An RNA of 177 nucleotides, treated with 2A3 and DMS and read out base by base.
[RMDB]
RNA sequence: GGGAACGACUCGAGUAGAGUCGAAAAAUGGUCAUGCCAGGCGCGGACGCCCCUCACCGGGCUUCCAAGGAGGAUGUUGCCAUUGCAACCCUUGACACAAUGCGCAGGAGUGUGCCACCUGCCAUUCUCUACUCGGAAGAUUCGUCUUCCGAGUAGAAAAAGAAACAACAACAACAAC
Reactivity to 2A3 in 0.01 (KOAc 150mM, MgCl2 10mM, bicine 150mM(pH8.5), 24C), signal-to-noise 2, nucleotides 027 to 126: a000u030g000g020u090c020a020u140g230c010c020a050g100g010c000g010c040g040g000a000c000g010c030c020c030c010u010c000a040c010c040g030g010g000c000u000u000c020c010a050a030g090g040a050g040g000a020u090g010u040u060g030c010c050a070u010u090g000c000a050a150c000c020c000u010u090g090a060c060a000c040a120a040u090g030c040g020c080a010g010g010a090g030u150g000u030g030c000c010a010c010c000u020g000c060c000a000u080u020c030
Reactivity to DMS in 0.01 (KOAc 150mM, MgCl2 10mM, bicine 150mM(pH8.5), 24C), signal-to-noise 4, nucleotides 027 to 126: a050u000g010g010u010c040a050u000g020c010c010a110g000g040c030g040c240g000g000a050c100g000c020c000c000c020u000c300a090c300c300g010g000g010c000u000u010c010c010a100a250g000g010a130g010g000a030u000g020u000u010g010c000c070a050u000u000g000c160a090a120c010c000c010u000u010g010a080c180a120c150a010a030u000g000c210g010c010a010g000g010a090g010u020g020u010g000c030c050a170c000c000u000g010c020c010a030u000u000c180
The reactions ran in a buffer of 150 mM KOAc, 10 mM MgCl2 and 150 mM bicine (pH 8.5), at 24 C. For 2A3, 2,107 sequencing reads were counted. Values are in units of 0.01, from 0 to 300, in steps of 10. 2A3 adducts were read by reverse transcription with SuperScript II with manganese. Reactivities are given for positions 27 through 126.